[RMDB]
RNA sequence: GGGAACGACUCGAGUAGAGUCGAAAAUCCUCAGUUCUCUCUAUUCUUUCCCUUUGAAAGAGGAGACUGCUGGACCAAACGCCCGAGCCGGGAUGGGCCGCAUGCCGGGCGAGAGGGGCGAAGUCGGGGAAGGGGAGAUCCCGAAGAGGAUCACCAAGUUCAAUAUUCGGUUCGCCGAAUAUUGAACAAAAGAAACAACAACAACAAC
Reactivity to 2A3 in 0.01 (KOAc 150mM, MgCl2 10mM, bicine 150mM(pH8.5), 24C), signal-to-noise 1, nucleotides 027 to 156: u000c000c010u010c020a090g020u230u020c010u000c010u040c010u050a190u300u070c070u050u040u120c150c080c100u160u060u300g110a140a100a050g050a020g040g000a010g020a010c020u020g090c040u020g080g050a010c030c010a290a000a060c010g000c000c000c000g000a120g040c080c030g000g000g070a110u130g060g060g110c030c030g030c060a010u170g070c030c020g080g010g050c010g010a010g010a010g010g010g040g000c040g030a100a040g010u100c020g000g000g000g040a040a000g020g000g010g000a060g000a010u020c040c000c020g030a110a040g060a050g020g000a010u010c000a000c140c000a020a040
About this RNA:
This 207-nucleotide RNA was probed chemically with 2A3. Conditions: 150 mM KOAc, 10 mM MgCl2 and 150 mM bicine (pH 8.5), 24 C. For 2A3 the reverse transcriptase was SuperScript II with manganese. For 2A3, 624 sequencing reads were counted.